[RMDB]
RNA sequence: GGGAACGACUCGAGUAGAGUCGAAAACAGAUGGCACCAGGAGAUAUGGAGCCCCUGCCAGUGUGAGUCGUAGCAGUGCAGGAGGGCUCACCCUGGAGGAGACAGCGGCCUCGGUUGACGCCUACACCCUACUUGCCCAAUUCGUUGGGCAAGUAGGAAAAGAAACAACAACAACAAC
Reactivity to DMS in 0.01 (KOAc 150mM, MgCl2 10mM, bicine 150mM(pH8.5), 24C), signal-to-noise 2, nucleotides 027 to 126: c060a120g010a090u010g000g000c030a170c010c000a030g010g020a170g020a100u010a130u000g020g000a060g000c020c030c000c020u000g000c030c050a150g000u000g000u000g000a070g030u010c020g010u000a110g020c040a160g020u000g010c030a030g000g000a170g010g020g000c010u010c020a050c110c040c000u000g060g010a080g000g010a140g020a080c100a100g000c120g010g000c010c020u000c010g010g000u010u000g010a110c130g000c050c030u000a100c100a090c150
Reactivity to 2A3 in 0.01 (KOAc 150mM, MgCl2 10mM, bicine 150mM(pH8.5), 24C), signal-to-noise 2, nucleotides 027 to 126: c000a040g080a130u120g030g000c000a030c040c010a000g020g050a140g020a100u300a160u240g110g000a010g000c060c010c000c010u050g080c000c070a090g020u050g020u030g080a100g040u090c090g040u060a030g080c040a020g030u010g160c000a010g010g110a080g050g000g050c010u010c000a020c010c000c000u010g000g000a000g000g040a030g030a000c030a030g080c040g040g030c000c000u000c000g000g000u010u040g060a020c030g000c010c010u080a040c050a090c030